[RMDB]
RNA sequence: GGGAACGACUCGAGUAGAGUCGAAAAGGUUGGAUAUCCUGGCUGUAGCGAAGGUUCCUAGCUCGUCACUGACCGUAUAGAUGUGCCUUACGAACCUGAAAAUGGAACGCAGGAACGUACCAGCGUGCGUGCGGUUUAACAGGUAGGAGAUACCGCACAUAGUUGUCCACUUCGGUGGACAACUAUGAAAAGAAACAACAACAACAAC
Reactivity to 2A3 in 0.01 (KOAc 150mM, MgCl2 10mM, bicine 150mM(pH8.5), 24C), signal-to-noise 2, nucleotides 027 to 156: g080g010u120u040g040g020a080u070a090u200c000c040u030g050g030c000u080g020u150a060g030c100g020a140a070g070g010u030u000c000c000u040a050g040c010u020c130g050u040c040a020c150u060g050a060c010c030g050u120a020u060a150g070a080u050g040u020g060c030c010u030u010a030c050g000a010a040c000c060u030g040a030a090a020a090u220g150g030a070a030c060g020c040a020g040g030a090a010c040g000u020a020c000c050a030g010c050g070u020g010c030g000u000g020c000g000g000u000u080u120a160a050c010a040g160g080u060a030g030g020a060g000a020u110a080c040c050g000c000a000
Reactivity to DMS in 0.01 (KOAc 150mM, MgCl2 10mM, bicine 150mM(pH8.5), 24C), signal-to-noise 2, nucleotides 027 to 156: g030g020u000u020g010g010a150u010a050u000c010c020u020g030g010c010u000g000u010a080g000c050g020a170a070g070g040u000u000c000c020u000a090g060c030u000c070g000u010c030a070c110u000g010a070c070c050g020u000a070u000a110g000a080u010g000u000g020c030c030u000u010a030c070g030a030a220c000c000u010g010a070a070a190a220u000g030g010a100a210c130g000c020a010g000g020a070a200c010g020u000a060c130c090a080g050c070g020u000g000c040g060u010g000c010g020g020u000u000u000a070a080c020a030g010g030u000a080g010g010a090g000a210u000a040c000c010g030c020a140